[RMDB]
RNA sequence: GGGAACGACUCGAGUAGAGUCGAAAACGUCUACAUUGGAGAGUUAUCCAGGUUAGCCGUGCUAUGUAGUACCAAGGAAAUCUACAUCGGAGCAAUUAGAGACCUUAACGCUCUCUAUUUGAUGCGCGCUAGUUCUGGAGUUCGCUCCAGAACUAGCAAAAGAAACAACAACAACAAC
Reactivity to DMS in 0.01 (KOAc 150mM, MgCl2 10mM, bicine 150mM(pH8.5), 24C), signal-to-noise 1, nucleotides 027 to 126: c020g000u010c000u000a040c030a040u000u000g000g000a000g000a300g000u070u030a070u000c110c060a020g000g090u050u030a030g060c180c110g000u000g020c210u080a080u000g040u000a000g000u000a190c080c200a090a090g000g010a070a000a020u000c000u000a000c070a030u000c210g000g000a130g000c000a100a050u000u040a010g000a060g020a070c140c050u000u020a090a220c090g010c300u000c060u000c000u000a000u000u000u000g000a010u000g080c070g000c180
Reactivity to 2A3 in 0.01 (KOAc 150mM, MgCl2 10mM, bicine 150mM(pH8.5), 24C), signal-to-noise 3, nucleotides 027 to 126: c010g020u010c030u030a030c010a130u050u060g000g000a000g000a010g050u150u080a050u110c040c020a030g090g000u030u030a000g000c040c030g000u030g020c030u040a000u020g000u010a010g030u080a110c000c150a160a030g150g060a130a090a020u030c010u000a010c030a030u030c050g140g090a200g080c010a030a060u090u110a090g030a010g010a080c000c000u030u130a030a020c090g000c000u000c000u000c000u010a040u010u100u040g080a100u040g010c090g010c010